Chemical mapping of a 177-nucleotide RNA with DMS and 2A3.
Values cover nucleotides 27 to 126.
Reactivities are rounded to 0.1 and cut off at 0 and 3.
Source: RMDB library OK1LIB, as collected in RNAgym.
RNA sequence: GGGAACGACUCGAGUAGAGUCGAAAACGAACAAGUGAUUGUUUCGGAAUUGGAUAUGGUGGUCUUAUUGUCACCAAUAGGCAUCUGUUUAAACGAAACAAUGGAACGUUGACAAUAAGGUCUCGUCAUACAGGCGGAAUUUCGAUUCCGCCUGUAUAAAAGAAACAACAACAACAAC
Reactivity to DMS in 0.01 (KOAc 150mM, MgCl2 10mM, bicine 150mM(pH8.5), 24C), signal-to-noise 2, nucleotides 027 to 126: c040g000a060a070c180a080a060g000u010g010a130u000u010g010u000u000u020c010g010g020a080a110u050u030g010g010a070u000a080u060g020g000u010g000g020u000c010u000u010a000u000u000g000u030c080a060c070c040a150a040u080a120g010g000c020a000u000c060u020g000u020u010u010a080a150a240c190g030a070a000a000c020a000a000u040g020g030a080a060c130g010u020u020g020a030c060a010a010u000a000a030g030g000u010c000u000c000g000u020c060
Reactivity to 2A3 in 0.01 (KOAc 150mM, MgCl2 10mM, bicine 150mM(pH8.5), 24C), signal-to-noise 2, nucleotides 027 to 126: c040g120a040a000c030a030a120g000u050g080a120u010u120g010u010u010u000c000g030g110a140a070u180u160g060g060a010u080a060u090g300g030u040g040g000u000c000u000u060a030u010u000g000u000c010a070c060c060a020a020u170a080g140g030c020a000u000c050u000g050u000u000u020a130a290a000c120g070a000a000a000c010a000a010u040g030g000a060a060c040g020u000u040g000a000c000a000a050u000a050a030g030g000u020c040u020c000g020u000c000